[RMDB]
RNA sequence: GGGAACGACUCGAGUAGAGUCGAAAAGUCGUGGAAGACUAGAUCGGGAGGAACGCGGCGGUGAACGUGGUGAAAGAGGGGACGGUGGUUUUGCGAGGCGCCGUCGAAAUGAAGAUGAUAUAAAUAACUAAAUCCGAGGAUUCGUCCUCGGAUUUAGAAAAGAAACAACAACAACAAC
Reactivity to DMS in 0.01 (KOAc 150mM, MgCl2 10mM, bicine 150mM(pH8.5), 24C), signal-to-noise 2, nucleotides 027 to 126: g000u000c060g000u000g010g000a110a170g000a020c100u000a060g020a100u000c070g000g000g010a160g010g020a070a110c100g020c050g000g000c050g060g020u000g030a090a080c050g050u000g030g010u000g000a030a090a070g000a120g000g000g020g010a030c000g010g010u000g000g010u000u010u000u030g010c080g010a140g000g000c070g000c010c010g010u010c050g000a020a020a080u000g000a040a070g010a070u000g000a070u000a150u020a060a040a070u010a090a210